[RMDB]
RNA sequence: GGGAACGACUCGAGUAGAGUCGAAAAUCAGUGCCUCUGCAAGCACCAGCUAUGGCCAGGCAAAGUAACAAAUCAAACCCAUGGCUUCAACCACUAUCUACACACUAUGACACCCGAAUACCUAUGUCUCCUGAGUUCUGAGUAUUCAGCUGCCUACCGUGUGGAUAUGGUUCGCCAUAUCCACACGAAAAGAAACAACAACAACAAC
Reactivity to 2A3 in 0.01 (KOAc 150mM, MgCl2 10mM, bicine 150mM(pH8.5), 24C), signal-to-noise 2, nucleotides 027 to 156: u110c040a020g030u010g070c000c000u080c080u120g020c060a080a000g010c010a070c040c010a000g010c000u070a070u140g030g000c020c040a030g020g010c040a130a050a020g080u110a120a050c080a050a060a100u160c070a120a040a040c040c020c030a040u030g040g000c000u030u130c020a020a060c010c000a000c040u050a040u090c000u080a030c030a000c010a020c060u100a070u210g050a040c040a050c060c000c000g060a050a000u050a080c000c010u050a040u090g060u010c040u000c010c050u050g020a020g060u080u050c040u040g060a050g000u020a140u060u040c010a000g020c010u030g010c010c000u050a110c010